[RMDB]
Chemical mapping of a 177-nucleotide RNA with 2A3 and DMS. For DMS, 4,202 sequencing reads were counted. For 2A3 the reverse transcriptase was SuperScript II with manganese. Reactivities are given for positions 27 through 126.
RNA sequence: GGGAACGACUCGAGUAGAGUCGAAAAGAUAUGGAUGACGAAUCAAGCGCGAAACUCCGUGUCGGAAACGACACAGGAGGAGCUUGUGGCGUCAUCCUAAGUCAAAAGCAAGACUUCGGUCUUGCAACAUUGGACUGUACUUCGGUACAGUCCAAUGAAAAGAAACAACAACAACAAC
Reactivity to 2A3 in 0.01 (KOAc 150mM, MgCl2 10mM, bicine 150mM(pH8.5), 24C), signal-to-noise 2, nucleotides 027 to 126: g060a020u050a030u120g000g010a000u000g000a010c030g000a080a120u210c020a030a010g000c050g020c100g180a270a090a030c010u010c010c020g020u000g000u000c000g000g000a050a040a010c000g010a000c030a020c100a130g020g000a000g000g020a010g010c020u030u040g020u070g140g120c050g000u000c000a000u000c000c000u000a030a010g020u000c020a000a040a150a060g000c010a000a000g000a010c000u050u210c300g100g000u000c000u000u010g000c000a000a000
Reactivity to DMS in 0.01 (KOAc 150mM, MgCl2 10mM, bicine 150mM(pH8.5), 24C), signal-to-noise 3, nucleotides 027 to 126: g020a020u020a300u000g010g010a010u000g000a040c020g010a100a070u010c020a010a010g030c000g030c260g010a150a120a180c010u000c000c000g010u000g000u000c000g020g010a090a070a090c010g000a000c000a010c000a070g010g000a010g000g020a070g010c010u000u010g030u020g020g020c050g010u000c000a010u000c000c000u000a010a100g010u010c030a070a100a090a220g010c000a020a010g000a030c000u010u010c210g030g030u000c000u000u000g010c000a080a090